[RMDB]
RNA sequence: GGGAACGACUCGAGUAGAGUCGAAAAGAUAUGGAACGAGAACUACUCGGACGAAACCAGCGUUGAAACGAGCGUCGGAAACGACGCUCGUGGAGCUGACUGACGGUACGAGCUCGUUCCUAAGUCACGGUAAUAGUAGGUUCGCCUACUAUUACCGAAAAGAAACAACAACAACAAC
Reactivity to 2A3 in 0.01 (KOAc 150mM, MgCl2 10mM, bicine 150mM(pH8.5), 24C), signal-to-noise 2, nucleotides 027 to 126: g010a040u020a000u070g010g010a010a000c020g060a000g020a120a030c120u210a070c030u300c020g010g090a060c030g090a110a080a090c150c000a020g000c010g300u300u030g010a010a000a010c000g000a010g000c000g040u020c000g030g000a010a020a010c000g020a000c000g000c000u010c000g000u000g000g000a000g010c020u000g050a080c070u130g140a030c030g060g120u300a020c010g000a000g020c000u010c020g000u000u000c000c000u000a010a000g010u010c030a010
Reactivity to DMS in 0.01 (KOAc 150mM, MgCl2 10mM, bicine 150mM(pH8.5), 24C), signal-to-noise 2, nucleotides 027 to 126: g010a010u010a170u010g000g000a010a010c000g000a000g010a070a050c080u020a300c000u000c000g040g010a140c050g020a150a140a080c200c020a010g000c020g000u000u030g000a100a160a010c000g000a000g010c020g020u000c020g000g000a020a030a100c000g010a000c000g040c000u000c010g020u000g000g010a000g030c010u000g010a060c140u010g000a280c130g020g010u000a090c020g000a010g000c000u000c000g000u010u000c000c000u000a000a040g010u010c010a280